Source: RMDB library RNAMAK, as collected in RNAgym. Chemical mapping of a 207-nucleotide RNA with 2A3 and DMS. The DMS profile rests on 11,373 reads. Values cover nucleotides 27 to 156.
RNA sequence: GGGAACGACUCGAGUAGAGUCGAAAAGAUACGAACUUCGGUUCGUAUCCUGUGACCUUUGUGCAGCUGGAGCUGGAUCAAGCCCCAUUGGGGAACUACUUGCGCACAGCGUUGAAAGCUGCACUCUGGUGGAUAUCAUUUGAUUCGUCAAAUGAAAAGUUCAAAGUUUAUUCGUAAACUUUGAACUAAAAGAAACAACAACAACAAC
Reactivity to 2A3 in 0.01 (KOAc 150mM, MgCl2 10mM, bicine 150mM(pH8.5), 24C), signal-to-noise 6, nucleotides 027 to 156: g010a000u010a010c000g000a000a010c020u080u180c300g090g000u000u000c000g000u000a010u010c010c000u220g100u140g090a020c000c000u000u000u010g000u000g000c000a000g000c000u000g000g020a010g010c000u010g000g020a090u100c010a010a010g010c010c010c020c070a300u240u300g010g000g000g020a020a040c040u180a040c000u240u000g020c070g020c070a060c000a090g000c000g120u180u030g000a000a010a000g000c000u000g000c000a000c000u000c000u010g000g000u050g010g050a080u120a040u160c000a000u000u010u010g040a050u020u070c170g080u020c120a000a010a010u040g030a060a110a040
Reactivity to DMS in 0.01 (KOAc 150mM, MgCl2 10mM, bicine 150mM(pH8.5), 24C), signal-to-noise 4, nucleotides 027 to 156: g000a020u000a010c000g010a020a010c000u000u000c300g050g000u000u000c010g020u000a000u000c010c040u000g020u010g000a120c010c000u020u000u000g010u010g010c030a070g020c010u010g010g020a290g020c000u000g010g020a190u000c030a050a060g010c040c020c010c010a300u010u010g020g020g000g010a060a080c040u000a130c010u000u000g000c080g020c200a240c000a020g010c000g020u010u020g010a170a230a100g000c000u000g000c000a000c010u000c010u000g010g020u000g010g010a160u000a120u000c000a010u000u000u000g010a080u000u000c300g030u000c010a010a010a030u000g000a020a100a110